[RMDB]
RNA sequence: GGGAACGACUCGAGUAGAGUCGAAAAAGCGUAGCGGUACGCCGCUACGCUAGGCGCAUUUGAACUGUAUUGUACGCCUUGCAUAAAGCAAAAGUACUAAAAAAACGUGCCGUUACGACGGCACGAAAAAACAUCCAUUGGUUCGCCAAUGGAUGAACAUAUUUAGCUUGUUCGCAAGCUAAAUAUGAAAAGAAACAACAACAACAAC
Reactivity to 2A3 in 0.01 (KOAc 150mM, MgCl2 10mM, bicine 150mM(pH8.5), 24C), signal-to-noise 4, nucleotides 027 to 156: a000g000c000g000u000a000g000c000g010g020u030a030c180g030c020c000g000c000u000a000c000g000c000u000a000g000g000c020g010c040a090u080u100u250g130a160a120c100u100g030u170a090u120u110g020u020a010c010g010c020c000u020u040g000c040a090u100a290a170a080g000c010a020a020a010a020g030u040a030c070u170a000a050a080a010a000a010a050c010g000u000g000c000c000g000u010u040a070c250g000a000c000g080g000c000a000c000g000a000a010a000a010a000a000c000a000u000c000c000a010u000u010g020g000u020u030c140g020c080c000a000a000u000g000g000a000u000g000a000a000
Reactivity to DMS in 0.01 (KOAc 150mM, MgCl2 10mM, bicine 150mM(pH8.5), 24C), signal-to-noise 2, nucleotides 027 to 156: a040g010c000g020u000a000g020c020g030g030u000a080c300g040c000c010g050c010u000a060c000g030c000u000a000g000g020c000g020c010a060u020u020u000g000a050a190c120u000g000u000a220u000u000g010u000a030c030g020c040c010u020u010g020c010a110u010a060a140a180g040c060a030a080a080a160g010u000a180c040u010a000a000a020a070a050a050a120c000g010u000g020c000c000g030u000u000a080c240g040a120c000g030g010c000a020c010g000a010a020a040a090a070a030c020a010u000c000c000a050u000u000g000g030u000u010c300g020c020c000a010a010u000g000g000a000u000g010a020a120